[RMDB]
Chemical mapping of a 170-nucleotide RNA with DMS and 2A3. The 2A3 profile rests on 19,315 reads. Conditions: 150 mM KOAc, 10 mM MgCl2 and 150 mM bicine (pH 8.5), 24 C. For DMS the reverse transcriptase was MarathonRT.

RNA sequence: GGGAACGACUCGAGUAGAGUCGAAAAAAGCCCGAAGGUGGGAGAGGGGGAGAACACUUCGAGAGUUGGGGGAUAGAAAGAGGGCGAAUUUCCUCGGGAGGAUCCCCCAAGCUUCCAACAGGCAAGCGUAGUAUGCAGUUCGCUGCAUACAAAAGAAACAACAACAACAAC
Reactivity to DMS in 0.01 (KOAc 150mM, MgCl2 10mM, bicine 150mM(pH8.5), 24C), signal-to-noise 8, nucleotides 027 to 129: a100a060g070c010c000c000g040a100a020g000g000u010g000g020g020a050g000a020g020g000g000g000g000a030g000a040a020c110a060c040u020u030c130g020a050g010a050g030u000u000g000g010g010g010g000a000u040a040g000a040a180a120g010a010g000g000g000c220g030a060a100u040u040u040c030c020u020c020g000g000g000a180g020g030a010u000c010c000c010c000c030a020a030g000c060u000u000c030c030a090a130c160a110g010g030c130a020a020g020c140g030u000a050
Reactivity to 2A3 in 0.01 (KOAc 150mM, MgCl2 10mM, bicine 150mM(pH8.5), 24C), signal-to-noise 6, nucleotides 027 to 129: a000a000g090c000c000c020g020a030a020g080g070u140g020g010g000a060g000a030g010g000g010g010g000a040g010a010a000c030a010c020u080u100c050g060a050g000a010g070u060u060g000g000g000g020g000a010u020a020g060a020a040a010g020a020g000g010g000c090g080a040a080u070u100u100c000c000u010c000g010g020g010a050g000g040a010u020c000c000c000c000c000a020a010g010c000u060u000c010c010a040a060c010a030g010g030c020a010a010g020c010g030u040a020